[RMDB]
RNA sequence: GGGAACGACUCGAGUAGAGUCGAAAAGUGCAAUGGCACGGUCUCAGCUCACUGCAACCUCUGAAUCCCGGAUUCAAACGAUUCUCCUGCCUGAGCCUCCGGAGUAGCUGGGAUUACAGGCAUGCGCAUGUACAUCCCAUUUCGAUGGGAUGUACAUAAAAGAAACAACAACAACAAC
Reactivity to 2A3 in 0.01 (KOAc 150mM, MgCl2 10mM, bicine 150mM(pH8.5), 24C), signal-to-noise 2, nucleotides 027 to 126: g010u020g000c020a090a300u160g180g000c010a010c050g020g000u010c010u010c000a000g000c000u020c050a070c030u100g020c010a070a100c010c010u100c040u070g050a050a050u040c020c020c020g000g020a090u130u110c070a080a120a080c080g050a050u090u000c020u030c020c010u020g020c000c010u020g010a030g020c000c010u010c020c020g020g010a040g040u070a010g010c010u040g000g000g000a010u000u050a060c030a010g000g040c010a010u090g010c020g030c030
Reactivity to DMS in 0.01 (KOAc 150mM, MgCl2 10mM, bicine 150mM(pH8.5), 24C), signal-to-noise 8, nucleotides 027 to 126: g010u000g010c010a120a090u010g020g010c010a050c060g000g000u000c010u000c030a080g010c030u000c060a070c070u000g020c060a070a090c070c030u010c050u010g010a090a090u010c030c020c030g020g000a110u010u010c100a060a080a120c140g010a080u010u000c020u000c020c030u000g000c020c020u000g000a100g000c050c090u000c030c030g000g000a080g010u000a050g010c010u000g000g000g010a030u000u000a080c100a070g000g010c040a050u000g010c100g020c130
The record gives the reactivity of an RNA of 177 nucleotides to 2A3 and DMS. DMS adducts were read by reverse transcription with MarathonRT. Values cover nucleotides 27 to 126. The data come from the RNA Mapping Database (RMDB), library OK2TRN.